Chemical mapping of a 177-nucleotide RNA with DMS and 2A3.
The 2A3 profile rests on 1,287 reads.
RNA sequence: GGGAACGACUCGAGUAGAGUCGAAAAGGGUCAUCGGGUCUACCUUCAAUGUCAAUCCAAGUUUUAGCAUUGGGAUCAAUUUGAAGCAUUGAAUCUUUUAAAUCCAUCAUCUGUGAAUAAGUAAGUCACUUUAGGUCAUCUUCGGAUGACCUAAAGUAAAAGAAACAACAACAACAAC
Reactivity to DMS in 0.01 (KOAc 150mM, MgCl2 10mM, bicine 150mM(pH8.5), 24C), signal-to-noise 2, nucleotides 027 to 126: g000g010g020u000c050a140u030c000g000g020g020u050c060u000a210c140c010u000u000c030a060a030u000g020u000c130a060a080u020c000c010a000a050g030u000u000u050u020a100g070c090a090u000u090g000g000g000a050u030c080a030a140u000u000u010g000a100a090g000c100a030u000u000g000a100a030u030c050u010u000u050u060a010a020a170u010c040c030a070u030c050a050u030c030u000g000u000g000a060a000u000a030a070g020u000a030a060g000u000c170
Reactivity to 2A3 in 0.01 (KOAc 150mM, MgCl2 10mM, bicine 150mM(pH8.5), 24C), signal-to-noise 3, nucleotides 027 to 126: g000g000g090u000c030a020u000c060g000g000g000u000c050u030a080c000c020u000u020c000a000a000u070g120u240c030a010a060u040c010c040a050a060g000u090u100u170u150a100g170c130a170u010u100g030g000g080a130u140c030a050a060u030u070u200g050a070a000g070c010a010u030u040g010a070a130u000c000u000u080u060u140a080a270a050u050c000c010a020u040c000a090u000c090u110g040u000g090a150a080u030a200a000g110u030a040a010g060u090c010

Record summary: 2A3 is a SHAPE reagent: it acylates the 2'-hydroxyl of flexible nucleotides of all four kinds. The data come from the RNA Mapping Database (RMDB), library OK1LIB.